[RMDB]
RNA sequence: GGGAACGACUCGAGUAGAGUCGAAAACAUUGGCUGUUAGAGGUACUUCGUUUCGAUCUCCAAAGUGAAAGGGAUGGAAUAUUGGACCUAUCGGGGUAGUAAUAUAAAAGGAUUCAAUAUCGAAAUCUUAUCUCGACUCAAAAAGGGACGUAUCUCGUACCCGAAACAUGUUCGCAUGUUUCGGGUAAAAAGAAACAACAACAACAAC
Reactivity to 2A3 in 0.01 (KOAc 150mM, MgCl2 10mM, bicine 150mM(pH8.5), 24C), signal-to-noise 1, nucleotides 027 to 156: c030a110u080u060g100g030c040u030g080u200u080a070g000a030g030g090u080a080c070u070u050c070g080u150u110u080c030g010a000u070c000u000c030c000a100a080a040g080u100g140a150a040a070g000g020g000a000u010g040g020a290a000u070a030u070u060g020g000a000c000c000u090a120u190c130g000g000g140g000u030a020g050u070a140a070u090a060u040a100a170a040a000g000g060a020u010u010c000a020a000u010a000u160c050g020a040a040a040u010c000u070u110a100u040c020u020c000g000a010c020u020c070a000a030a000a030a030g000g000g010a050c050g010u050a300u030c000u030c010g010

Background
This 207-nucleotide RNA was probed chemically with 2A3. Conditions: 150 mM KOAc, 10 mM MgCl2 and 150 mM bicine (pH 8.5), 24 C.